[RMDB]
RNA sequence: GGGAACGACUCGAGUAGAGUCGAAAAUGAAGAGAGGGAUACGCUCCUUCUCCAUGAGGGCCGCUGCGUGGGAGGUCUUGGCCAUCUGCAUGAGGGAGAAGAUGCCCUCCUGCAUACGGGCCCCUCCCUAGGAAAGAGUCUUCGGACUCUUUCCUAGAAAAGAAACAACAACAACAAC
Reactivity to 2A3 in 0.01 (KOAc 150mM, MgCl2 10mM, bicine 150mM(pH8.5), 24C), signal-to-noise 2, nucleotides 027 to 126: u120g080a220a040g040a000g000a020g000g040g010a040u070a080c140g060c140u010c000c010u020u000c000u000c000c010a030u150g050a150g000g040g060c000c000g040c120u110g000c020g050u060g010g040g000a040g050g000u050c170u110u120g060g030c000c000a040u080c010u040g020c010a060u110g000a020g040g080g000a060g030a150a150g090a040u270g050c000c000c000u010c010c010u010g000c000a030u100a090c070g090g010g010c060c000c030c000u000c000c000
Reactivity to DMS in 0.01 (KOAc 150mM, MgCl2 10mM, bicine 150mM(pH8.5), 24C), signal-to-noise 3, nucleotides 027 to 126: u000g010a130a100g010a030g000a030g000g010g010a030u010a120c270g000c110u000c000c000u000u000c010u000c010c010a060u010g000a120g000g010g010c040c020g030c080u010g000c110g050u000g010g010g010a030g000g010u010c150u000u000g020g000c010c000a090u010c040u000g000c040a020u000g010a030g010g000g000a060g020a120a130g020a130u010g010c040c000c000u000c000c020u010g000c010a020u010a090c210g000g020g000c000c010c000c020u000c000c010

Structure probing data (2A3 and DMS) for a 177-nucleotide construct.
For 2A3, 1,472 sequencing reads were counted.
2A3 adducts were read by reverse transcription with SuperScript II with manganese.